[RMDB]
RNA sequence: GGGAACGACUCGAGUAGAGUCGAAAAUAACUUGCAAUAAGAAAAACUUUAAGGGAAAGCACAAAUUUAAGUUUAGAGAAUAAUGUUUCAGUAAUUAACAAUAACACCAUUUAUUGCACUUUUACAAUAUGCCAAAAGCCAUUAAUUUGUGUGUUAACGGGUACGUUUUAUUCGUAAAACGUACCCGAAAAGAAACAACAACAACAAC
Reactivity to 2A3 in 0.01 (KOAc 150mM, MgCl2 10mM, bicine 150mM(pH8.5), 24C), signal-to-noise 1, nucleotides 027 to 156: u070a040a020c010u000u060g020c050a030a150u120a120a110g050a040a100a070a040a200c070u060u150u210a050a030g000g000g000a030a010a020g040c030a010c040a000a060a090u040u060u070a030a020g000u060u100u000a050g000a000g050a000a090u070a230a110u090g020u010u000u040c010a020g040u140a150a050u160u070a110a020c070a090a090u080a080a000c000a000c010c010a010u000u020u050a020u060u000g030c040a150c080u000u000u060u090a030c000a070a130u110a030u300g100c080c030a000a030a040a000g020c060c010a040u020u020a050a110u060u110u160g030u010g000u000g000u000u000a050a050